[RMDB]
RNA sequence: GGGAACGACUCGAGUAGAGUCGAAAAUUGAAGGUAAAACAGCCUGUGGGUGAAACACACCCACAGGGCCCAUUGGGCGCUAGCACUCUGGUAUCACGGUACCUUUCUGCGCCUGUUUUACCGAAGGUAGCGACUUCCUUCGGGAAGUCGAAAAGAAACAACAACAACAAC
Reactivity to 2A3 in 0.01 (KOAc 150mM, MgCl2 10mM, bicine 150mM(pH8.5), 24C), signal-to-noise 3, nucleotides 027 to 129: u090u070g050a070a010g000g000u010a000a000a010a000c000a000g010c000c000u000g000u000g000g000g000u010g040a050a070a020c160a010c020a000c050c000c010a000c000a000g010g000g000c000c000c010a040u260u300g010g000g000c020g010c060u100a040g010c000a000c020u040c000u000g000g000u010a000u030c030a050c210g110g010u010a010c000c000u000u020u010c020u000g000c000g010c000c020u000g000u000u000u000u000a000c000c000g000a000a000g020g040u100a030g030
Reactivity to DMS in 0.01 (KOAc 150mM, MgCl2 10mM, bicine 150mM(pH8.5), 24C), signal-to-noise 5, nucleotides 027 to 129: u000u000g000a140a160g000g000u020a000a000a020a050c040a030g000c000c000u000g010u020g020g010g010u020g040a120a170a130c240a130c030a010c070c040c010a000c000a050g030g000g040c010c010c020a020u040u080g000g000g000c010g000c010u000a080g050c000a030c090u000c020u000g020g010u000a020u020c020a110c210g050g020u000a020c000c020u000u020u040c150u030g020c020g030c040c000u010g040u100u000u010u010a000c000c010g010a050a050g000g000u000a060g020

The record gives the reactivity of an RNA of 170 nucleotides to 2A3 and DMS. The data come from the RNA Mapping Database (RMDB), library 15KLIB. For DMS the reverse transcriptase was MarathonRT. For 2A3, 18,021 sequencing reads were counted.